[RMDB]
RNA sequence: GGGAACGACUCGAGUAGAGUCGAAAAGAUAUGGAAUGUGGCCGUUGAUGACCUUGUAUUCCCUCGGAAACGAGAUCAUACAAGCAAGACGGCACAUUCCUAAGUCAAAGCUCCGUUCGCGGAGCAAGAUGGACAAAACCUUCGGGUUUUGUCCAUCAAAAGAAACAACAACAACAAC
Reactivity to DMS in 0.01 (KOAc 150mM, MgCl2 10mM, bicine 150mM(pH8.5), 24C), signal-to-noise 1, nucleotides 027 to 126: g010a040u000a300u020g040g000a010a000u000g000u000g010g020c010c000g040u000u000g010a060u000g010a090c300c010u000u000g000u000a000u000u000c190c110c010u000c050g000g000a060a060a130c010g000a050g000a050u010c280a000u000a050c000a010a000g000c030a050a080g010a010c000g000g020c000a050c000a000u000u000c000c000u000a050a060g000u000c010a070a100a260g020c000u000c000c000g050u000u000c160g030c050g020g050a020g010c010a020a010
Reactivity to 2A3 in 0.01 (KOAc 150mM, MgCl2 10mM, bicine 150mM(pH8.5), 24C), signal-to-noise 1, nucleotides 027 to 126: g020a020u060a020u130g000g030a040a000u020g080u090g300g300c010c060g000u020u020g030a300u110g080a070c010c000u040u000g030u000a040u030u120c070c060c010u040c000g040g050a000a060a010c020g010a010g030a040u130c010a020u040a010c010a020a020g000c020a000a270g000a000c010g010g010c000a000c030a000u020u000c000c000u020a030a000g000u010c030a040a110a160g010c020u000c040c020g070u080u070c300g000c000g090g000a000g030c000a000a020
Source: RMDB library TTRDEL, as collected in RNAgym. Structure probing data (DMS and 2A3) for a 177-nucleotide construct. For 2A3 the reverse transcriptase was SuperScript II with manganese. The reactions ran in a buffer of 150 mM KOAc, 10 mM MgCl2 and 150 mM bicine (pH 8.5), at 24 C.